This 177-nucleotide RNA was probed chemically with 2A3 and DMS.
RNA sequence: GGGAACGACUCGAGUAGAGUCGAAAAUGAGUAAAGUCUUGGGUACCUAGGGAAAGGUGAAGGAGCUAGACUCCUUACCAAGUACUUAGGGGGUGGAGAGUAGUAGGAGUGUUGGAGAAGCCCGGUGCUUUAUUACGGUCUUCGGACCGUAAUAAAGAAAAGAAACAACAACAACAAC
Reactivity to 2A3 in 0.01 (KOAc 150mM, MgCl2 10mM, bicine 150mM(pH8.5), 24C), signal-to-noise 2, nucleotides 027 to 126: u190g030a030g050u100a040a080a060g020u000c080u090u070g030g010g000u080a060c000c000u010a000g060g000g000a020a010a010g060g000u110g140a030a000g010g010a010g000c040u090a090g120a300c010u000c000c000u000u000a000c000c000a000a000g000u010a000c000u010u000a000g000g000g000g000g010u080g020g060a110g010a010g030u120a020g000u050a020g030g060a100g010u070g030u120u070g040g010a050g010a050a030g010c000c060c030g040g000u040g020
Reactivity to DMS in 0.01 (KOAc 150mM, MgCl2 10mM, bicine 150mM(pH8.5), 24C), signal-to-noise 4, nucleotides 027 to 126: u020g010a090g020u020a110a090a060g010u000c060u020u020g000g010g020u030a150c000c010u000a000g000g010g000a110a210a230g000g000u000g000a020a000g000g010a010g020c030u020a160g000a220c000u000c000c010u010u000a010c000c000a000a050g010u000a060c000u000u000a000g000g000g010g010g030u020g000g000a090g000a050g000u010a050g000u010a060g010g000a080g020u000g000u010u030g000g010a080g010a060a120g010c030c020c040g000g040u020g000